[RMDB]
RNA sequence: GGGAACGACUCGAGUAGAGUCGAAAAACCGACAAAGAAAAUAACGAAGUGUUGGUAGAUCCAAAUUUGAUCAUUAACCAACAAGCAAGUGUUAACUUUGCUUUUGCAUAAGUAGAUACUAAAGCUACAGCUGGUGAAUAGUCAUAGUUUGCUAGCUCAUUGACAUGCAGUUCGCUGCAUGUCAAUGAAAAGAAACAACAACAACAAC
Reactivity to 2A3 in 0.01 (KOAc 150mM, MgCl2 10mM, bicine 150mM(pH8.5), 24C), signal-to-noise 2, nucleotides 027 to 156: a010c040c010g010a010c040a010a060a010g040a120a140a020a010u080a080a000c010g030a100a120g000u000g000u020u000g030g010u040a040g010a020u050c110c060a050a200a230u120u050u190g010a010u000c000a010u000u020a090a050c000c000a000a000c000a000a000g110c010a040a000g010u010g030u140u080a120a070c000u000u000u010g030c020u070u130u180u180g010c040a010u060a090a120g000u030a010g020a040u080a120c160u130a260a070a030g020c000u030a040c040a000g010c000u000g030g020u040g000a010a010u080a050g050u200c070a050u040a090g040u010u000u020g000c010u000a000g000c000u000